[RMDB]
RNA sequence: GGGAACGACUCGAGUAGAGUCGAAAAUAUUUAGCAGACAAAGAUUUCUCUGUAAACGUUAUUUCUAAAUCUGGUACAACUACAGAACCAGCAGUUGCAUUUAGAUUGUUCAAACAAUUAGUUGAAGUCGAAAAGGAAAGUUCGCUUUCCUUUUCGAAAAAGAAACAACAACAACAAC
Reactivity to DMS in 0.01 (KOAc 150mM, MgCl2 10mM, bicine 150mM(pH8.5), 24C), signal-to-noise 2, nucleotides 027 to 126: u050a030u040u070u010a060g040c130a030g000a050c160a030a160a120g010a100u020u010u020c060u020c000u000g000u000a060a100a090c190g020u060u000a010u020u000u000c000u020a070a060a020u000c060u000g000g000u000a050c020a040a020c010u020a030c080a070g060a020a060c230c180a080g000c100a040g020u000u030g010c030a020u010u020u040a010g000a000u010u000g000u080u010c130a060a000a100c070a070a100u010u010a110g010u020u000g030a070a070g060
Reactivity to 2A3 in 0.01 (KOAc 150mM, MgCl2 10mM, bicine 150mM(pH8.5), 24C), signal-to-noise 2, nucleotides 027 to 126: u200a080u090u230u110a040g000c000a000g010a090c070a080a200a010g060a070u060u300u000c010u000c000u030g060u070a000a080a060c030g040u020u250a060u020u160u000c040u080a050a050a000u000c000u010g000g000u010a070c020a040a000c090u050a070c010a040g120a200a020c010c010a000g050c000a040g020u000u020g000c000a030u020u040u030a050g000a120u000u090g090u130u260c070a010a050a040c020a040a080u180u100a130g050u000u120g000a000a000g090

Structure probing data (DMS and 2A3) for a 177-nucleotide construct. The DMS profile rests on 2,260 reads. For DMS the reverse transcriptase was MarathonRT.